The record gives the reactivity of an RNA of 207 nucleotides to DMS and 2A3. For DMS the reverse transcriptase was MarathonRT. The RNA was probed in 150 mM KOAc, 10 mM MgCl2 and 150 mM bicine (pH 8.5) at 24 C. For 2A3, 4,917 sequencing reads were counted.
[RMDB]
RNA sequence: GGGAACGACUCGAGUAGAGUCGAAAACUUUGUCAGUGGGGUCAGGAUUUGGUAGCUGGUGCUGAGAUAAAACCCUUGAUUACAUCCUUGCCCUGAUACUGUACCAGUGGCAGCUGUUACUCAAGGGAACAGUGAAAGGCAUAUGUUCGCAUAUGCCCCAUUCAUUGUCCUUCGGGACAAUGAAUGGAAAAGAAACAACAACAACAAC
Reactivity to DMS in 0.01 (KOAc 150mM, MgCl2 10mM, bicine 150mM(pH8.5), 24C), signal-to-noise 2, nucleotides 027 to 156: c060u010u010u010g020u000c050a160g030u000g020g010g000g040u000c090a090g040g000a120u000u000u000g000g040u000a070g030c020u010g020g030u000g010c030u000g000a140g020a190u000a060a060a060a110c000c000c020u000u000g010a060u000u000a060c010a040u000c010c020u000u030g030c000c000c000u020g000a060u000a060c180u010g020u010a040c020c010a030g030u000g070g010c010a000g030c060u000g000u000u000a050c170u000c010a050a040g000g110g030a050a070c050a070g030u000g000a080a040a150g000g020c010a020u000a020u010g000u000u000c300g000c010a010u000a020u000g000c000c010
Reactivity to 2A3 in 0.01 (KOAc 150mM, MgCl2 10mM, bicine 150mM(pH8.5), 24C), signal-to-noise 6, nucleotides 027 to 156: c040u070u090u160g060u070c050a050g020u040g020g060g000g000u020c040a030g030g030a090u060u080u150g050g020u040a030g020c030u000g010g040u030g000c010u040g040a060g020a100u180a060a100a060a080c010c010c000u000u000g020a020u030u050a010c010a020u030c030c040u040u090g000c010c000c000u010g020a040u060a170c090u120g070u140a090c040c000a030g020u220g090g000c010a050g060c010u010g010u020u020a030c010u010c010a000a000g000g030g010a020a020c020a020g030u080g090a130a070a020g010g000c010a000u010a010u000g020u020u050c170g000c100a000u010a000u010g000c000c000